[RMDB]
RNA sequence: GGGAACGACUCGAGUAGAGUCGAAAAAAUGCACCACUUAAUGGAAAAAUAGUACCGUUGGCUGAUGUUAAAGAUGGCGUUUUCGCCAGUGAAAUAAUAGGGAAGGGAAUAGCUAUUUAUCCCACAGACGGAACUAUAGGUUCGCCUAUAGUUCCGUAAAAGAAACAACAACAACAAC
Reactivity to DMS in 0.01 (KOAc 150mM, MgCl2 10mM, bicine 150mM(pH8.5), 24C), signal-to-noise 2, nucleotides 027 to 126: a120a050u000g000c040a110c020c000a040c040u000u010a060a010u020g010g020a020a080a080a140a090u000a070g030u000a100c090c050g010u000u000g000g020c120u030g000a080u010g000u000u000a050a030a090g010a120u010g010g010c020g000u000u010u000u000c060g010c000c030a050g010u010g000a010a090a060u000a060a040u000a070g020g000g000a070a040g010g010g000a040a060u000a130g020c050u000a020u000u000u000a160u000c000c000c000a140c220a110g000